[RMDB]
RNA sequence: GGGAACGACUCGAGUAGAGUCGAAAACCGGUACCAGUGCCUGUCCUGGUCCGGAGGCGUCGAGAUGACAGGAUGGCUUCCGGAACCCGCCUGGGUUCCGCUAGCGACACAGAUCCAGGCUCGCGGCGAAAAGGGUGUGUCCUUUCUCCCUCUAGUGGCUGAAUGUAAAGUUCGCUUUACAUUCAGCAAAAGAAACAACAACAACAAC
Reactivity to 2A3 in 0.01 (KOAc 150mM, MgCl2 10mM, bicine 150mM(pH8.5), 24C), signal-to-noise 3, nucleotides 027 to 156: c000c000g000g050u130a080c010c000a000g010u000g020c000c020u020g010u010c000c000u000g000g010u000c000c010g030g010a040g050g140c120g080u140c100g070a080g030a190u050g010a010c000a000g000g010a000u020g010g000c000u010u010c010c000g000g000a010a010c000c020c030g030c040c060u110g010g010g010u000u000c000c000g000c000u000a000g000c010g040a010c020a000c000a110g130a060u040c000c010a000g030g000c030u040c060g080c060g010g020c050g060a080a030a040a000g020g010g000u110g030u060g050u150c010c000u020u060u030c060u020c010c060c000u000c050u070a120g110u080g190
Reactivity to DMS in 0.01 (KOAc 150mM, MgCl2 10mM, bicine 150mM(pH8.5), 24C), signal-to-noise 1, nucleotides 027 to 156: c010c000g020g010u000a000c000c020a080g040u010g010c040c000u000g020u000c030c010u030g010g000u010c000c020g020g000a060g020g000c120g050u020c080g010a240g030a160u010g000a050c010a070g020g010a050u000g010g010c020u000u010c070c010g060g000a040a020c030c010c040g040c120c080u020g000g010g000u000u000c000c010g000c050u000a020g020c000g020a210c050a080c080a190g020a150u010c010c000a100g000g000c020u000c090g020c060g020g000c060g000a030a070a060a080g020g000g020u000g000u000g030u000c020c070u000u000u020c050u000c010c000c000u000c000u000a080g020u000g000
Notes
Source: RMDB library RSTRND, as collected in RNAgym. Structure probing data (2A3 and DMS) for a 207-nucleotide construct. For 2A3 the reverse transcriptase was SuperScript II with manganese. The 2A3 profile rests on 2,373 reads.